The record gives the reactivity of an RNA of 177 nucleotides to DMS. For DMS, 897 sequencing reads were counted. It was measured as part of the RMDB library OK2TRN.
RNA sequence: GGGAACGACUCGAGUAGAGUCGAAAAUCUGGUGCCCCUCAUCGCGCUGUCGCUGGCCUCCUUUCGGGGGAUCAAGAUCGGCUACACGGCGCACAUCCGCAAGGCGACCGAGCCGGUGUUUGAGGAGCCAGACCCAGAUAUUCGUAUCUGGGUCUGGAAAAGAAACAACAACAACAAC
Reactivity to DMS in 0.01 (KOAc 150mM, MgCl2 10mM, bicine 150mM(pH8.5), 24C), signal-to-noise 2, nucleotides 027 to 126: u030c000u010g000g000u000g000c120c040c020c010u000c030a060u010c170g000c030g020c020u000g020u000c080g010c050u020g030g000c010c010u010c010c000u040u040u040c280g000g000g030g040g020a040u020c150a020a040g000a080u010c060g010g000c000u020a110c170a300c050g040g010c030g050c060a110c000a130u000c040c120g000c140a170a150g000g020c060g000a110c020c080g010a190g010c070c050g000g000u000g010u000u000u010g010a060g000g010a150g010